Chemical mapping of a 177-nucleotide RNA with 2A3 and DMS. For 2A3, 948 sequencing reads were counted. Values cover nucleotides 27 to 126. It was measured as part of the RMDB library RFMREP. The DMS profile rests on 1,223 reads.
RNA sequence: GGGAACGACUCGAGUAGAGUCGAAAACAGCGGAGUUUUAAACUUUAAAUAGACAGGUCUGAGUGCCUGAACUUGCCUUUUCAUUUUACUUCAUCCUCCAAGGAGUUCAAUCACUUGGCGUGACUUCCGAUAGGAUCAACUUCGGUUGAUCCUAUCGAAAAGAAACAACAACAACAAC
Reactivity to 2A3 in 0.01 (KOAc 150mM, MgCl2 10mM, bicine 150mM(pH8.5), 24C), signal-to-noise 1, nucleotides 027 to 126: c030a010g060c110g050g010a080g070u100u070u090u270a140a040a010c000u060u060u150a110a090a060u110a060g050a040c010a030g050g000u000c060u210g180a030g110u170g010c000c000u000g020a020a020c010u030u100g050c020c000u040u120u010u070c060a070u050u090u060u140a070c010u020u070c020a130u000c000c030u000c020c000a010a010g000g030a040g010u060u070c060a060a060u040c000a040c020u030u020g060g000c050g030u030g020a000c040u040u000c000
Reactivity to DMS in 0.01 (KOAc 150mM, MgCl2 10mM, bicine 150mM(pH8.5), 24C), signal-to-noise 2, nucleotides 027 to 126: c150a100g000c110g000g010a020g000u010u000u000u010a010a080a190c010u000u000u010a070a100a170u000a040g010a210c040a010g010g000u010c010u030g050a120g010u010g010c050c020u000g000a020a020c050u000u010g010c020c040u000u000u010u020c040a060u000u000u000u030a030c080u000u000c080a100u010c020c010u000c040c050a030a050g010g000a090g000u000u000c170a040a080u010c060a100c030u010u000g000g010c110g020u000g000a100c100u000u000c070